[RMDB]
RNA sequence: GGGAACGACUCGAGUAGAGUCGAAAAUGCUAGUACAUAUGCUAUUUGUUGCAUACUUUUGGGUAGCAAUAGGUGGGUGGGCUGCCGGAUGCGAAAGGACAGCGUGUGUGCGCUUUUGCGGCUUACAGCGUACCAGUGACUUCGGUCACUGGUACGCAAAAGAAACAACAACAACAAC
Reactivity to 2A3 in 0.01 (KOAc 150mM, MgCl2 10mM, bicine 150mM(pH8.5), 24C), signal-to-noise 2, nucleotides 027 to 126: u070g020c020u080a060g030u120a110c110a100u080a010u030g030c020u000a030u090u150u180g130u050u090g010c020a050u080a120c100u090u080u280u070g130g020g100u050a010g000c000a040a070u030a030g080g000u130g070g000g030u170g000g030g010c070u000g020c020c000g040g070a050u080g020c040g000a080a070a000g080g030a070c100a120g040c000g000u110g050u090g040u040g010c010g020c000u030u000u010u040g050c000g000g010c000u000u090a040c050a080